[RMDB]
RNA sequence: GGGAACGACUCGAGUAGAGUCGAAAAGAAAGGCAGCCAGUGCAGCCCACGUAGCCACUCGACGCAUGCUUUUGCAUGCCGCCCACGACUGAGGGCAGCUGCGGCACUGAGGGCAGCUGCCGAAAGAGAGCAUUAGGUGGUUCGCCACCUAAUGCUCAAAAGAAACAACAACAACAAC
Reactivity to 2A3 in 0.01 (KOAc 150mM, MgCl2 10mM, bicine 150mM(pH8.5), 24C), signal-to-noise 1, nucleotides 027 to 126: g060a030a080a020g030g000c020a010g000c030c060a010g020u060g030c030a080g090c020c000c000a020c020g000u020a020g030c000c030a080c040u040c090g140a080c080g000c010a000u030g000c000u020u170u230u300g000c000a000u030g000c010c010g000c000c000c000a070c030g300a070c090u210g100a170g020g050g010c000a000g000c010u050g000c010g040g010c020a010c050u040g030a110g020g110g070c040a000g030c000u010g000c000c000g000a020a010a000g060a000
Reactivity to DMS in 0.01 (KOAc 150mM, MgCl2 10mM, bicine 150mM(pH8.5), 24C), signal-to-noise 1, nucleotides 027 to 126: g040a040a100a160g010g020c040a010g000c020c030a010g000u000g020c030a120g010c010c020c050a220c010g010u000a080g020c010c050a080c110u000c060g010a110c180g000c000a000u010g010c000u000u000u000u000g010c010a000u000g030c000c190g030c020c020c050a120c050g000a050c080u010g010a060g020g010g010c010a080g000c000u020g040c000g000g000c100a090c010u010g010a170g000g010g010c100a190g030c020u000g000c000c000g000a000a100a090g000a220
Chemical mapping of a 177-nucleotide RNA with 2A3 and DMS. The DMS profile rests on 1,019 reads. The reactions ran in a buffer of 150 mM KOAc, 10 mM MgCl2 and 150 mM bicine (pH 8.5), at 24 C. For 2A3 the reverse transcriptase was SuperScript II with manganese. For 2A3, 1,265 sequencing reads were counted. It was measured as part of the RMDB library OK2TRN.